[RMDB]
This 177-nucleotide RNA was probed chemically with DMS and 2A3. The data come from the RNA Mapping Database (RMDB), library OK1LIB. Conditions: 150 mM KOAc, 10 mM MgCl2 and 150 mM bicine (pH 8.5), 24 C.
RNA sequence: GGGAACGACUCGAGUAGAGUCGAAAAUCUAUCUCUCGAAAGUGCCGAAAAGUCGCCGCGAGAGGAUCACGAUGCCGCGAGUGAGGACAAGUCAAUCAGAAGGAGCCCGGUGCCCGAACCGAGCUCGAUGCGUACGAUGAUUCGUCAUCGUACGCAUAAAAGAAACAACAACAACAAC
Reactivity to DMS in 0.01 (KOAc 150mM, MgCl2 10mM, bicine 150mM(pH8.5), 24C), signal-to-noise 2, nucleotides 027 to 126: u010c070u000a130u000c040u010c020u020c000g000a070a110a050g010u010g020c080c030g100a050a090a140a190g030u010c000g040c020c030g020c110g000a000g020a010g020g000a100u000c070a080c070g000a070u010g000c070c070g020c000g000a190g020u010g000a050g000g020a060c070a040a130g000u010c120a090a060u020c060a020g010a230a090g000g000a040g010c010c000c000g040g040u000g000c010c030c040g020a050a120c010c020g000a200g020c000u000c000g000
Reactivity to 2A3 in 0.01 (KOAc 150mM, MgCl2 10mM, bicine 150mM(pH8.5), 24C), signal-to-noise 3, nucleotides 027 to 126: u040c020u030a090u040c010u000c000u000c000g070a290a300a040g080u170g070c000c020g090a150a180a000a010g080u110c010g010c010c000g040c020g030a000g010a010g020g070a060u110c020a030c090g060a040u110g020c000c000g050c000g010a020g050u100g010a130g060g000a050c040a170a050g070u080c030a020a130u030c020a000g040a180a010g090g020a030g020c010c020c000g010g000u050g000c000c010c000g000a040a010c000c000g000a000g010c000u010c000g020

For 2A3 the reverse transcriptase was SuperScript II with manganese.